[RMDB]
Structure probing data (2A3) for a 207-nucleotide construct. For 2A3, 891 sequencing reads were counted. 2A3 adducts were read by reverse transcription with SuperScript II with manganese. Values cover nucleotides 27 to 156.
RNA sequence: GGGAACGACUCGAGUAGAGUCGAAAACGCAGGUGGCUCCAUUUAAGCGCUUCAUCUGGCCAGGUGGAUUGCGCUACCCGUAACGGGGCUAACACUAAUGUCGGUUUGGUUUCACUGCCUGAUAAAUAGAGAUUUUCUAACGCCGUCAGUGUGGCUGACUCACACUUAGGUUCGCCUAAGUGUGAGUAAAAGAAACAACAACAACAAC
Reactivity to 2A3 in 0.01 (KOAc 150mM, MgCl2 10mM, bicine 150mM(pH8.5), 24C), signal-to-noise 2, nucleotides 027 to 156: c090g030c030a040g050g050u040g040g000c000u070c040c010a090u090u100u140a180a050g000c000g000c030u030u000c000a040u000c000u110g120g020c070c040a030g000g000u030g060g000a100u090u260g010c010g000c020u050a030c030c010c040g060u140a100a030c120g000g010g000g000c030u020a070a010c050a000c040u120a130a180u160g040u060c030g020g000u120u050u100g040g000u050u090u080c040a010c030u120g020c000c000u060g040a100u070a150a130a050u170a080g060a010g030a070u150u100u150u080c070u080a110a070c080g020c070c000g040u040c040a040g020u020g040u040g110g090c030u000g050